[RMDB]
RNA sequence: GGGAACGACUCGAGUAGAGUCGAAAAGAUAUGGAUAGAGAGCAACAGCUACCACCUCGGAAACGAGGUGUGUAGACAUGCUCGAUUGUCCUAAGUCAAAAGACGAGCGUGUUCGCACGCUCGUCAAGAGGCAUAAAUUGUUCGCAAUUUAUGCCUCAAAAGAAACAACAACAACAAC
Reactivity to 2A3 in 0.01 (KOAc 150mM, MgCl2 10mM, bicine 150mM(pH8.5), 24C), signal-to-noise 2, nucleotides 027 to 126: g000a010u050a030u080g010g000a000u020a030g080a000g000a020g070c060a030a170c100a200g080c020u010a000c000c000a010c010c000u000c000g020g030a050a010a020c000g010a020g000g000u010g010u040g010u010a000g040a030c000a050u030g000c000u020c000g020a020u030u040g010u000c000c000u000a060a010g030u000c040a080a020a020a160g020a000c000g020a000g000c000g000u010g010u050u090c130g060c180a000c000g000c010u010c010g000u020c010a000a000
Reactivity to DMS in 0.01 (KOAc 150mM, MgCl2 10mM, bicine 150mM(pH8.5), 24C), signal-to-noise 4, nucleotides 027 to 126: g010a020u000a250u010g000g010a020u000a030g010a280g000a020g020c010a040a110c270a150g020c010u000a010c000c000a010c000c000u000c000g010g000a080a060a100c000g000a010g000g010u000g010u010g030u000a000g000a090c150a130u000g000c010u000c000g000a160u020u010g020u000c000c000u000a040a150g020u000c020a090a050a100a100g010a020c000g000a000g000c020g030u000g020u010u010c280g010c000a000c000g020c000u000c000g000u000c000a010a060